This 207-nucleotide RNA was probed chemically with 2A3.
For 2A3, 350 sequencing reads were counted.

RNA sequence: GGGAACGACUCGAGUAGAGUCGAAAAAUGAAAAUGCACAGUGACAGGUUUUAGGAUCCUGCUUCAGGAUUUCCUUUUCCUGGUUUGGUCACUAGAGUUGGCUAUUUAUCUGUUUCUAAACAAUAGCUAUUUUAUCGAAUAGUUUAGAGACCACUAACACUAAAAUCACCUUCGGGUGAUUUUAGUGAAAAGAAACAACAACAACAAC
Reactivity to 2A3 in 0.01 (KOAc 150mM, MgCl2 10mM, bicine 150mM(pH8.5), 24C), signal-to-noise 1, nucleotides 027 to 156: a030u100g000a080a000a020a090u140g030c030a000c000a050g000u080g080a040c010a030g030g010u080u110u230u180a010g000g000a000u000c000c000u080g120c240u300u250c030a000g010g050a030u090u180u110c000c000u020u000u030u050c000c010u030g070g040u100u120u090g030g000u030c030a010c030u060a030g010a010g080u060u060g010g010c010u030a060u120u170u040a100u140c050u050g010u000u050u000c010u100a050a000a000c050a040a090u030a080g000c010u030a040u170u190u070u110a170u080c050g040a040a000u040a080g000u020u020u020a080g000a030g000a050c060c010a040c130u140a090a000
It was measured as part of the RMDB library OK3TST.